[RMDB]
RNA sequence: GGGAACGACUCGAGUAGAGUCGAAAAACGUCCUACAAGGUGACGCUGAGGCCCUUCCUCAACCCCAACGAUCAGGGCCUGUACAUCUUCACGGGCACGAGCACCGUUCACUUCCAGUGCGUGCAGCGUGGUUCAGGAUUUUCGAAUCCUGAACCACAAAAGAAACAACAACAACAAC
Reactivity to DMS in 0.01 (KOAc 150mM, MgCl2 10mM, bicine 150mM(pH8.5), 24C), signal-to-noise 2, nucleotides 027 to 126: a070c140g020u000c000c030u000a270c220a070a030g020g030u020g000a050c100g040c120u020g000a050g010g040c060c020c010u000u010c050c060u030c090a020a190c050c010c000c010a100a060c180g000a020u000c120a050g000g000g000c000c020u010g000u000a080c040a030u020c080u010u000c070a080c130g030g000g000c040a100c160g000a110g010c000a070c040c090g000u000u000c110a040c070u010u040c100c090a100g000u000g000c050g010u000g000c020a120g000c120
Reactivity to 2A3 in 0.01 (KOAc 150mM, MgCl2 10mM, bicine 150mM(pH8.5), 24C), signal-to-noise 1, nucleotides 027 to 126: a010c010g020u020c000c000u040a080c050a030a050g030g030u050g020a020c060g020c110u150g000a070g020g030c010c010c000u040u080c040c010u110c060a150a150c010c020c000c030a020a040c050g020a010u110c090a010g000g020g000c000c000u010g010u040a020c010a020u030c020u000u100c030a020c030g020g040g000c030a000c080g030a000g000c030a030c060c030g020u110u090c060a050c070u150u060c040c020a010g010u010g000c010g000u040g040c010a000g060c020